[RMDB]
RNA sequence: GGGAACGACUCGAGUAGAGUCGAAAACUUCUUGUUCUCGAGGGCCUUCCUUCUUCGGUGAUCCUGCCUCUCCUUGUCGGUGAAUCCUCCCCUGAGGGGCCUCUUUCCAGGUCCGGAGUCUACUUCCUACGAGCGGGCUUCGGCCCGCUCAAAAGAAACAACAACAACAAC
Reactivity to DMS in 0.01 (KOAc 150mM, MgCl2 10mM, bicine 150mM(pH8.5), 24C), signal-to-noise 1, nucleotides 027 to 129: c000u010u000c040u000u040g030u010u000c060u010c000g000a140g000g000g000c000c070u040u000c000c020u000u040c010u040u050c150g030g000u030g030a070u040c010c040u030g010c060c060u040c010u020c000c070u000u050g060u030c070g040g050u000g050a080a100u020c030c000u040c020c000c000c020u000g040a100g040g030g060g010c000c040u050c050u020u020u000c120c060a070g020g080u000c040c030g140g080a020g000u020c050u020a120c140u010u040c020c090u050a030c130
Reactivity to 2A3 in 0.01 (KOAc 150mM, MgCl2 10mM, bicine 150mM(pH8.5), 24C), signal-to-noise 2, nucleotides 027 to 129: c040u060u020c000u050u080g010u110u000c030u000c010g040a090g000g000g000c010c010u000u000c000c000u040u060c000u100u050c040g000g070u040g000a020u020c000c050u020g040c000c000u020c000u000c010c000u030u040g030u080c060g000g000u040g040a000a030u030c010c000u020c000c010c000c040u020g000a040g000g040g000g020c000c030u010c000u070u100u000c060c030a000g090g000u010c020c000g000g000a000g030u040c000u070a090c010u020u050c020c000u040a080c040
Source information
Source: RMDB library 15KLIB, as collected in RNAgym. The record gives the reactivity of an RNA of 170 nucleotides to DMS and 2A3. For DMS, 6,066 sequencing reads were counted. For 2A3, 3,223 sequencing reads were counted. The RNA was probed in 150 mM KOAc, 10 mM MgCl2 and 150 mM bicine (pH 8.5) at 24 C. For DMS the reverse transcriptase was MarathonRT.